[RMDB]
RNA sequence: GGGAACGACUCGAGUAGAGUCGAAAAGCCACUGCCUUCGGGCAGUGGCAAAAGAAAGCGAUUUCUGACCGCUUUUUAGUCAGAAAUAGAUCGAAAGAUCAAAAACGUCAGACUUCGGUCUGACGAAGCUAAUCAAUAACUUCGGUUAUUGAUUAGCAAAAGAAACAACAACAACAAC
Reactivity to 2A3 in 0.01 (KOAc 150mM, MgCl2 10mM, bicine 150mM(pH8.5), 24C), signal-to-noise 3, nucleotides 027 to 126: g020c000c000a000c010u010g010c020c000u050u070c250g040g020g030c000a000g000u010g010g010c000a020a010a000a010g020a070a090a000g010c020g020a030u030u020u000c010u000g000a010c000c010g010c090u150u180u040u080u140a010g010u020c000a000g030a000a020a020u110a020g010a010u010c010g030a090a040a040g000a010u010c030a060a040a000a030a010c010g000u000c000a000g000a000c000u060u100c230g090g000u000c000u000g000a000c000g000a010a000
Reactivity to DMS in 0.01 (KOAc 150mM, MgCl2 10mM, bicine 150mM(pH8.5), 24C), signal-to-noise 2, nucleotides 027 to 126: g010c000c000a000c000u000g000c010c000u010u030c270g000g030g060c000a000g050u000g000g000c010a000a010a060a180g010a070a100a050g010c010g000a180u010u000u000c010u010g000a000c000c000g020c030u000u010u000u020u000a080g000u000c000a000g000a010a050a130u010a110g000a010u000c010g000a120a050a190g020a010u000c020a100a060a080a080a160c020g000u000c000a020g010a000c000u000u000c190g050g030u000c000u000g010a010c000g000a030a050